The record gives the reactivity of an RNA of 177 nucleotides to DMS.
DMS adducts were read by reverse transcription with MarathonRT.
The DMS profile rests on 1,099 reads.
RNA sequence: GGGAACGACUCGAGUAGAGUCGAAAAGAUGAAAGCAGGCCAGCGUUUAACGCUUAAACGCCCGCAGCACGGGAUGCGCAGUUAUCUGGCGGUCGCGGGUGGUAUUGAUGUUCCGCCGGUAAUGGGCGGUGACUACCCGAUUCGUCGGGUAGUCACCAAAAGAAACAACAACAACAAC
Reactivity to DMS in 0.01 (KOAc 150mM, MgCl2 10mM, bicine 150mM(pH8.5), 24C), signal-to-noise 1, nucleotides 027 to 126: g000a070u000g010a080a110a210g000c030a050g000g020c030c070a070g000c010g040u000u010u000a070a050c070g010c040u000u000a030a080a170c070g000c010c010c030g000c020a090g020c110a110c100g000g000g000a020u010g050c040g000c110a070g000u000u010a020u000c000u000g030g010c000g000g000u000c080g000c020g000g000g030u010g030g000u000a040u000u000g000a100u010g010u000u010c100c020g000c000c000g010g010u000a060a100u000g020g020g030c080